[RMDB]
RNA sequence: GGGAACGACUCGAGUAGAGUCGAAAAGUUUAAGCUGUUAUGAAUGGCGUCUGAAAAGAGUUCAUGAUGCGUUGGAAACUAUGAAGAAGUCGGAUGAAUAUUCCUAUAAUGAUAUUAUUAAGCAUACCUGUGUAACACCAUUCGUGGUGUUACACAGAAAAGAAACAACAACAACAAC
Reactivity to DMS in 0.01 (KOAc 150mM, MgCl2 10mM, bicine 150mM(pH8.5), 24C), signal-to-noise 2, nucleotides 027 to 126: g010u000u000u000a050a120g000c030u000g000u010u000a000u010g000a030a020u010g000g000c110g020u000c070u000g000a050a100a160a100g000a170g000u000u010c030a020u000g020a050u020g000c070g000u040u030g010g000a050a060a060c050u000a080u040g010a110a040g030a100a080g030u020c040g000g000a090u000g000a080a010u010a090u000u020c000c010u010a060u020a080a060u010g000a080u020a210u010u040a090u000u010a090a120g020c040a050u000a130c160
Reactivity to 2A3 in 0.01 (KOAc 150mM, MgCl2 10mM, bicine 150mM(pH8.5), 24C), signal-to-noise 3, nucleotides 027 to 126: g010u030u040u090a040a020g040c040u030g000u090u070a100u080g080a090a020u090g120g070c050g010u030c010u040g080a010a040a030a000g040a020g000u000u010c040a000u050g040a020u030g030c030g030u000u040g010g050a040a070a020c010u000a060u200g050a070a090g010a050a000g100u030c050g030g070a070u130g060a090a120u160a130u170u010c000c000u100a090u150a090a070u220g070a040u050a050u080u140a030u070u070a110a040g040c050a030u090a050c000